[RMDB]
RNA sequence: GGGAACGACUCGAGUAGAGUCGAAAAGCGUCGACGACCGGCACCUCCAACGGCUCGGUCAACUCGAUGCACGACAGCUACACACCACUGGGCGGCAUGGUCCCGCUGGCGCACAUGAUGCUCGGCGGUGCCUAACAUAGUUCGCUAUGUUAGGCACAAAAGAAACAACAACAACAAC
Reactivity to 2A3 in 0.01 (KOAc 150mM, MgCl2 10mM, bicine 150mM(pH8.5), 24C), signal-to-noise 4, nucleotides 027 to 126: g000c010g010u010c000g020a090c080g020a010c010c000g000g020c060a160c030c020u230c110c040a110a080c130g050g000c090u110c170g020g000u000c010a010a020c020u010c020g020a010u030g010c010a020c020g050a010c010a030g000c040u090a040c040a000c020a020c090c010a030c050u060g010g040g020c030g010g000c050a060u050g070g000u080c000c000c010g030c050u060g050g000c090g040c030a070c010a110u190g070a130u070g070c020u010c000g050g010c030g060
Reactivity to DMS in 0.01 (KOAc 150mM, MgCl2 10mM, bicine 150mM(pH8.5), 24C), signal-to-noise 5, nucleotides 027 to 126: g010c010g030u000c010g000a020c130g000a020c010c000g010g000c090a080c090c040u010c180c260a080a120c290g000g020c050u010c010g010g000u000c020a030a040c160u000c000g010a010u000g020c010a090c070g000a070c070a070g000c040u010a060c110a110c050a040c020c020a070c060u000g010g010g020c030g010g010c020a060u000g020g000u010c070c010c020g020c060u000g020g010c110g020c050a070c040a080u000g000a090u000g000c030u000c010g020g010c070g010
This 177-nucleotide RNA was probed chemically with 2A3 and DMS. The 2A3 profile rests on 6,850 reads. Conditions: 150 mM KOAc, 10 mM MgCl2 and 150 mM bicine (pH 8.5), 24 C. 2A3 adducts were read by reverse transcription with SuperScript II with manganese.